Source: RMDB library RNAMAK, as collected in RNAgym.
The record gives the reactivity of an RNA of 207 nucleotides to DMS and 2A3.
As a SHAPE reagent, 2A3 marks flexible, mostly unpaired nucleotides at the ribose 2'-OH.
The 2A3 profile rests on 4,645 reads.
For DMS the reverse transcriptase was MarathonRT.
The RNA was probed in 150 mM KOAc, 10 mM MgCl2 and 150 mM bicine (pH 8.5) at 24 C.
RNA sequence: GGGAACGACUCGAGUAGAGUCGAAAAAAACGCUGGGAGCGAUAAGACAGCAGCGGUCAUGGAGAAUACUGAAGCGCGCACGGUAUUCUAUGAAGUGAUGCGCUGCAAUGACGUCGCUCCUGUGCUGAAGCGCGCACGGCAACCGAAAGGUGCGAAAGUAUGGGAUAUUGUUCGCAAUAUCCCAUACAAAAGAAACAACAACAACAAC
Reactivity to DMS in 0.01 (KOAc 150mM, MgCl2 10mM, bicine 150mM(pH8.5), 24C), signal-to-noise 1, nucleotides 027 to 156: a080a090a040c000g050c030u000g030g030g000a070g080c000g000a030u020a050a280g000a240c010a060g010c000a010g030c000g040g020u000c030a030u000g000g030a010g040a010a020u000a010c000u000g050a050a030g010c010g030c000g010c010a300c000g030g000u000a000u000u000c040u010a200u000g010a180a300g000u000g000a030u020g030c060g000c000u000g010c000a090a050u000g010a050c020g000u000c010g020c030u010c000c010u000g070u000g010c070u000g040a070a100g000c030g010c000g010c000a140c050g010g010c000a120a090c020c040g000a060a140a170g030g010u010g010c070g000a070a100a170
Reactivity to 2A3 in 0.01 (KOAc 150mM, MgCl2 10mM, bicine 150mM(pH8.5), 24C), signal-to-noise 3, nucleotides 027 to 156: a000a000a000c030g020c010u020g000g030g010a010g020c020g000a020u030a070a080g130a110c090a060g010c000a000g000c010g020g000u000c000a010u000g040g000a010g000a020a000u010a000c010u010g060a190a050g020c000g000c000g000c000a000c010g010g010u010a010u000u010c020u070a300u050g020a000a000g060u030g060a000u090g250c000g000c000u020g000c010a010a060u040g010a020c030g000u010c000g000c000u010c000c000u000g000u010g000c000u010g010a090a030g010c000g000c000g000c000a000c010g000g000c000a010a010c000c000g030a100a050a030g010g000u000g010c010g020a100a070a010